[RMDB]
RNA sequence: GGGAACGACUCGAGUAGAGUCGAAAAGUAGUUAUGCUGAAAAUCGUUGAGGUUGUAUGGAAUAGGUUAACCGUAAGACCUUAAGUUGCAAAACUUUAAAAUUAAUCUCAGGUAAAUUACUUUGAGUAAAACCUUCGUCGUUUCGACGACGAAGGAAGUCGUGAUUGAGAUUCGUCUCAAUCACGACAAAAGAAACAACAACAACAAC
Reactivity to 2A3 in 0.01 (KOAc 150mM, MgCl2 10mM, bicine 150mM(pH8.5), 24C), signal-to-noise 1, nucleotides 027 to 156: g060u060a010g030u170u000a130u170g030c000u030g050a000a000a000a150u070c080g030u010u050g150a010g030g000u010u030g020u020a180u090g010g140a040a190u060a200g200g000u180u170a030a090c000c010g000u100a010a050g020a020c000c000u000u010a060a000g010u030u020g000c010a000a080a000a070c050u120u110u280a200a170a120a120u010u150a150a200u060c060u000c020a000g020g000u020a070a160a210u070u000a020c020u220u180u020g010a020g020u010a080a080a080a120c000c000u000u010c000g000u000c000g000u000u160u040c160g100a030c000g000a000c010g000a000a070g000g010a010a000